[RMDB]
RNA sequence: GGGAACGACUCGAGUAGAGUCGAAAAAGGGAUUCGUCCCUAGGAAGGAUAUGGACGUGAACUACAGAAUGAAGGGUCGUUGAAAUAGGCUCGGAAACGAGCCUAUGGAGACCUCAAAGUCUGCACGUCCUAAGUCGAAGAGCACUUUCGAGUGCAACCCAUUUAUGGGUUUCGACCCAUAAAUGGGAAAAGAAACAACAACAACAAC
Reactivity to DMS in 0.01 (KOAc 150mM, MgCl2 10mM, bicine 150mM(pH8.5), 24C), signal-to-noise 2, nucleotides 027 to 156: a050g010g020g020a040u010u000c290g020u000c000c000c010u000a050g000g010a120a160g030g030a170u000a130u020g020g050a060c000g020u000g000a130a190c040u030a260c000a020g030a040a070u000g020a290a120g010g020g010u000c000g020u000u010g000a200a140a040u000a010g020g000c000u010c000g000g000a120a080a200c000g020a000g010c000c010u000a010u000g010g000a190g000a010c000c000u030c070a050a250a200g000u000c010u000g010c000a000c030g000u000c000c000u000a010a100g010u000c030g010a100a150g010a150g030c020a020c030u000u010u000c230g030a070g020u000g020c000a100a100
Reactivity to 2A3 in 0.01 (KOAc 150mM, MgCl2 10mM, bicine 150mM(pH8.5), 24C), signal-to-noise 5, nucleotides 027 to 156: a000g040g010g010a050u090u150c250g060u050c090c020c000u020a070g100g110a130a040g130g010a010u020a010u090g000g000a000c000g010u010g010a060a040c050u220a060c210a050g050a100a080u080g040a140a060g050g000g000u010c030g130u220u030g000a010a000a000u000a000g010g000c000u000c000g000g000a020a030a000c000g000a000g000c010c000u000a000u000g000g000a010g000a000c000c010u030c010a040a080a020g050u010c020u030g010c010a000c010g000u040c000c000u010a010a000g010u010c020g020a100a030g090a030g060c030a010c010u070u160u190c300g090a010g010u000g000c010a030a090

An RNA of 207 nucleotides, treated with DMS and 2A3 and read out base by base. Reactivities are rounded to 0.1 and cut off at 0 and 3. The RNA was probed in 150 mM KOAc, 10 mM MgCl2 and 150 mM bicine (pH 8.5) at 24 C. It was measured as part of the RMDB library RNAMAK. 2A3 adducts were read by reverse transcription with SuperScript II with manganese.